[RMDB]
RNA sequence: GGGAACGACUCGAGUAGAGUCGAAAAACCUAGACUAAGCCCAGGAACAUAAGACCUCAGAGCUAAUGAGCCACAUACCUACCCAAGGUGAAAGCUCCUUCUCUCGCAAUGUGUAACUCAUGAUUCUUCUAUGAAGACUAUUCGUAGUCUUCAUAGAAAAAGAAACAACAACAACAAC
Reactivity to DMS in 0.01 (KOAc 150mM, MgCl2 10mM, bicine 150mM(pH8.5), 24C), signal-to-noise 6, nucleotides 027 to 126: a060c010c010u010a070g010a090c080u020a120a130g000c020c010c010a070g000g000a050a060c090a060u020a070a080g000a080c040c020u010c070a040g010a100g000c080u000a060a070u010g000a080g020c030c030a050c070a100u040a040c010c010u000a070c020c030c020a130a070g000g000u010g000a060a060a100g000c020u000c020c030u000u000c030u000c030u000c060g000c080a070a040u020g010u010g000u010a060a090c070u000c040a060u030g000a120u010u010c070u000
Reactivity to 2A3 in 0.01 (KOAc 150mM, MgCl2 10mM, bicine 150mM(pH8.5), 24C), signal-to-noise 9, nucleotides 027 to 126: a000c020c000u040a040g040a060c040u080a040a030g010c000c010c000a020g030g030a040a020c040a100u160a100a060g050a070c000c010u030c050a030g000a010g060c020u060a100a060u090g030a010g040c030c000a040c010a050u140a050c010c000u030a050c000c010c030a030a020g030g000u050g020a100a040a000g020c010u030c000c010u050u020c010u000c000u000c020g030c050a030a090u060g030u010g010u090a050a030c020u020c060a040u080g070a110u140u010c010u030